[RMDB]
RNA sequence: GGGAACGACUCGAGUAGAGUCGAAAAGAUAUGGAGGACGGAAGUAGCAAUGACGGAGUGAACUACUCUACGGAUCGGAAACGAUCCGAAGAGCACUCUAAGACAGCUACUUCCGUCCUCCUAAGUCCUUUUAACAACUCUUCGGAGUUGUUAAAAGAAAAGAAACAACAACAACAAC
Reactivity to DMS in 0.01 (KOAc 150mM, MgCl2 10mM, bicine 150mM(pH8.5), 24C), signal-to-noise 3, nucleotides 027 to 126: g010a090u000a280u010g010g000a000g040g010a000c000g000g010a020a010g030u010a000g010c010a150a140u010g010a220c300g000g010a000g010u000g000a130a020c070u010a300c000u000c020u020a060c000g020g000a000u000c000g010g000a090a070a250c000g000a010u000c010c000g000a030a040g000a020g010c000a000c000u000c000u000a180a210g030a140c260a080g010c010u000a010c000u000u000c000c000g010u000c000c010u000c000c000u000a000a070g010u000c020